[RMDB]
RNA sequence: GGGAACGACUCGAGUAGAGUCGAAAAUCUGGCUACUGCUUCUAUCGAUGAGUCGCGAAUGGCGUGAUGCUCACAUUCCUGCAGCAAGCGAUAGGGUCUUUUCGAUUCAUCCUGUUCGGACAACCAGAGGGUAGAUAUCUUUCGAGAUAUCUACCCUAAAAGAAACAACAACAACAAC
Reactivity to DMS in 0.01 (KOAc 150mM, MgCl2 10mM, bicine 150mM(pH8.5), 24C), signal-to-noise 4, nucleotides 027 to 126: u010c070u010g010g020c010u010a050c070u000g010c050u010u000c050u000a070u010c100g030a100u000g010a100g030u000c040g030c040g000a160a100u010g020g010c080g030u000g010a090u000g010c040u000c100a090c060a120u000u000c040c030u000g000c070a040g000c060a060a120g010c030g000a060u000a080g020g010g000u000c020u000u000u000u010c020g000a030u000u000c020a090u000c020c030u000g000u000u010c020g000g000a070c090a050a180c030c030a160g000
Reactivity to 2A3 in 0.01 (KOAc 150mM, MgCl2 10mM, bicine 150mM(pH8.5), 24C), signal-to-noise 4, nucleotides 027 to 126: u010c010u020g040g000c020u070a080c020u140g050c000u050u030c040u070a120u090c050g120a120u050g050a050g050u050c040g010c030g080a100a120u120g090g030c030g040u030g060a080u140g030c030u040c030a030c000a050u070u050c010c020u050g000c010a040g030c050a130a030g020c010g070a060u070a110g070g010g030u020c020u000u030u000u040c030g010a030u020u020c000a010u030c010c030u020g060u130u040c030g030g030a040c030a100a070c040c020a020g030